Annotation
The record gives the reactivity of an RNA of 177 nucleotides to 2A3 and DMS. The RNA was probed in 150 mM KOAc, 10 mM MgCl2 and 150 mM bicine (pH 8.5) at 24 C. Values cover nucleotides 27 to 126. It was measured as part of the RMDB library OK2TST. 2A3 adducts were read by reverse transcription with SuperScript II with manganese. DMS adducts were read by reverse transcription with MarathonRT.
RNA sequence: GGGAACGACUCGAGUAGAGUCGAAAAGGCAGCAUCAUUGCCGCCAGUGAAGGAUCGGCAAUAUGAAUCGCCAGCCCGGUCGGAACCAGCGUAGUGUCACCCGGAGCCAGUUCUACGGCGUCGUCGAGUUGCACGUACUAUUCGUAGUACGUGCAACAAAAGAAACAACAACAACAAC
Reactivity to 2A3 in 0.01 (KOAc 150mM, MgCl2 10mM, bicine 150mM(pH8.5), 24C), signal-to-noise 3, nucleotides 027 to 126: g000g010c000a010g010c010a020u030c010a000u100u010g030c010c000g020c030c020a140g150u220g300a300a160g030g010a130u300c050g000g000c000a000a010u010a010u040g050a090a130u090c080g010c000c000a010g010c000c020c000g000g020u050c020g040g010a040a050c050c000a040g050c020g070u110a050g040u040g040u100c030a030c040c050c030g020g000a020g020c010c020a010g050u060u050c020u040a060c040g000g010c020g050u050c010g050u020c020g050a030
Reactivity to DMS in 0.01 (KOAc 150mM, MgCl2 10mM, bicine 150mM(pH8.5), 24C), signal-to-noise 4, nucleotides 027 to 126: g020g020c000a090g020c030a010u010c150a030u000u000g010c000c000g000c020c020a130g030u010g000a200a150g000g000a070u000c010g000g010c010a010a020u000a020u000g000a040a070u000c140g010c010c010a120g010c000c010c000g000g000u000c040g010g010a100a090c050c010a090g010c080g000u010a040g030u000g010u000c050a080c070c060c020g000g020a200g010c030c020a080g000u000u000c060u020a140c060g020g010c060g000u000c060g020u000c050g010a220